[RMDB]
The record gives the reactivity of an RNA of 177 nucleotides to DMS and 2A3.

RNA sequence: GGGAACGACUCGAGUAGAGUCGAAAAUCAAGAGACUGCACUCGAACGUGGAGCGCCUGAACACGCGCUGGAGUGCGGUGUGCAACCAAUUGGGUGAAAGAAUGCGCUCAUGCGAGACGGCUAUCGAAAUAGCUGAGUAGUUCGCUACUCAGCUAUUAAAAGAAACAACAACAACAAC
Reactivity to DMS in 0.01 (KOAc 150mM, MgCl2 10mM, bicine 150mM(pH8.5), 24C), signal-to-noise 5, nucleotides 027 to 126: u010c120a130a100g000a140g000a040c010u000g000c030a030c000u000c010g010a080a070c060g000u000g000g010a090g010c040g020c080c100u000g010a100a100c100a060c030g000c020g020c030u000g010g010a050g010u000g010c010g000g030u000g010u000g000c090a100a110c040c030a090a140u000u010g000g000g020u000g020a100a090a140g010a120a110u000g010c020g010c010u010c020a050u000g000c140g010a050g000a100c120g010g010c070u010a080u000c080g000a070
Reactivity to 2A3 in 0.01 (KOAc 150mM, MgCl2 10mM, bicine 150mM(pH8.5), 24C), signal-to-noise 3, nucleotides 027 to 126: u120c020a000a060g030a020g070a080c010u010g010c020a010c010u030c040g120a300a150c030g060u060g050g060a070g030c050g030c000c060u070g080a100a000c000a010c050g040c020g040c030u040g110g040a080g000u040g000c020g000g020u030g030u050g030c030a030a060c000c020a030a110u130u090g070g020g000u060g020a070a090a040g140a080a080u110g030c040g010c000u000c020a030u080g000c010g000a040g040a040c060g060g000c030u040a070u220c010g000a060
The RNA was probed in 150 mM KOAc, 10 mM MgCl2 and 150 mM bicine (pH 8.5) at 24 C.
The 2A3 profile rests on 2,579 reads.